[RMDB]
RNA sequence: GGGAACGACUCGAGUAGAGUCGAAAAGCGCGGGCCGGCUGGGCCACUCCUCGACCGCCGGCCCCACCCCUCUGGUUGGGACCGCGCCGGCGCGGACUCCUGCCGUCCGGGGCGGCGGGCCUACGCAAUGAUCCAUCAUAUUCGUAUGAUGGAUCAUAAAAGAAACAACAACAACAAC
Reactivity to 2A3 in 0.01 (KOAc 150mM, MgCl2 10mM, bicine 150mM(pH8.5), 24C), signal-to-noise 2, nucleotides 027 to 126: g040c050g030c070g010g030g050c010c000g040g050c040u190g060g000g010c050c020a080c090u070c010c020u060c050g050a050c000c030g020c000c000g010g000c020c010c010c000a000c010c000c010c030u050c050u130g070g010u070u080g020g040g090a130c030c000g080c030g090c030c030g070g030c130g000c010g060g070a060c010u070c070c090u170g110c020c010g000u010c000c020g010g010g070g050c010g020g000c010g010g000g000c000c000u030a030c050g000c060a040
Reactivity to DMS in 0.01 (KOAc 150mM, MgCl2 10mM, bicine 150mM(pH8.5), 24C), signal-to-noise 3, nucleotides 027 to 126: g030c120g040c110g040g010g020c010c010g010g010c020u010g050g010g020c060c070a050c100u000c070c040u010c050g000a070c010c010g000c010c010g000g000c010c000c000c010a010c030c010c010c090u000c090u000g010g020u010u010g010g010g010a070c010c000g010c030g010c010c020g010g010c160g020c020g000g010a020c060u010c100c080u000g010c020c050g010u000c000c010g010g010g010g020c010g000g010c010g000g000g000c030c000u000a050c100g010c160a130
An RNA of 177 nucleotides, treated with 2A3 and DMS and read out base by base. The data come from the RNA Mapping Database (RMDB), library OK2TRN. As a SHAPE reagent, 2A3 marks flexible, mostly unpaired nucleotides at the ribose 2'-OH. DMS adducts were read by reverse transcription with MarathonRT.